[RMDB]
An RNA of 177 nucleotides, treated with 2A3 and DMS and read out base by base. Values are in units of 0.01, from 0 to 300, in steps of 10. It was measured as part of the RMDB library OK2TRN.

RNA sequence: GGGAACGACUCGAGUAGAGUCGAAAAACAGAUACCAUUUGUCUCUAGAAUAGAUUAUAAACUUAAUCUGGAGAAGUUGAGUAGAUUUUCGAAUGUUAAUGUCAAACCUAUGGCCCGAACAUUUAGACCUAACAUAGAUCUUCGGAUCUAUGUUAGGAAAAGAAACAACAACAACAAC
Reactivity to 2A3 in 0.01 (KOAc 150mM, MgCl2 10mM, bicine 150mM(pH8.5), 24C), signal-to-noise 2, nucleotides 027 to 126: a000c070a000g080a100u130a090c010c000a020u060u010u220g090u000c000u000c000u020a040g020a080a070u040a040g000a070u110u300a230u220a300a100a020c000u060u110a070a050u050c000u000g010g000a030g020a040a030g080u090u200g030a090g010u060a040g000a260u010u070u100u210c050g030a010a030u050g000u080u100a040a050u060g030u050c040a090a060a270c010c000u100a150u120g000g070c010c070c000g090a040a010c010a020u060u000u090a050g030a080
Reactivity to DMS in 0.01 (KOAc 150mM, MgCl2 10mM, bicine 150mM(pH8.5), 24C), signal-to-noise 3, nucleotides 027 to 126: a120c120a120g010a170u000a040c030c020a040u000u000u020g000u000c000u000c000u010a040g010a070a130u010a040g000a070u010u020a130u010a110a080a070c030u000u010a060a090u000c000u000g000g000a020g000a020a080g000u000u010g010a100g010u000a020g000a110u000u000u000u000c060g000a040a020u000g020u000u000a070a130u000g000u000c040a050a060a100c100c100u010a050u000g000g020c020c090c110g000a030a030c080a040u000u000u000a110g020a230